[RMDB]
RNA sequence: GGGAACGACUCGAGUAGAGUCGAAAACUCAAGAUGAGAUGCCCUGUUUGCUAUGAGGCAUGUCUUUGGUGUGAGAACCCCGAUGGGUCUCUCUCCUCAUUAGCCCUGAUCAACAAAGAAAGAAACACCUAAAUCAAACAUUCGUGUUUGAUUUAGGAAAAGAAACAACAACAACAAC
Reactivity to DMS in 0.01 (KOAc 150mM, MgCl2 10mM, bicine 150mM(pH8.5), 24C), signal-to-noise 6, nucleotides 027 to 126: c020u000c030a130a130g010a140u010g010a060g000a090u000g010c010c000c010u000g000u000u000u010g020c130u000a050u000g000a080g010g000c100a050u000g010u000c060u000u000u010g010g020u000g010u000g000a040g010a090a080c020c010c000c300g010a130u010g010g020g010u010c080u000c010u000c030u000c020c020u000c040a040u010u010a080g000c010c050c050u000g000a120u010c080a040a050c100a020a070a060g010a040a080a090g010a120a110a080c180a090
Reactivity to 2A3 in 0.01 (KOAc 150mM, MgCl2 10mM, bicine 150mM(pH8.5), 24C), signal-to-noise 5, nucleotides 027 to 126: c010u000c020a040a030g190a220u190g010a040g010a060u050g000c010c000c000u020g070u050u160u110g070c020u060a030u140g040a110g070g000c020a020u060g070u010c000u060u090u080g040g000u070g000u010g030a040g010a110a090c030c000c010c050g290a270u300g000g000g050u040c030u000c010u000c010u000c070c010u010c010a080u060u100a040g000c000c010c030u040g040a060u070c010a010a070c020a050a110a030g120a060a120a010g130a020a080a010c040a050
This 177-nucleotide RNA was probed chemically with DMS and 2A3. Conditions: 150 mM KOAc, 10 mM MgCl2 and 150 mM bicine (pH 8.5), 24 C. 2A3 adducts were read by reverse transcription with SuperScript II with manganese. It was measured as part of the RMDB library OK2TST. For 2A3, 6,525 sequencing reads were counted.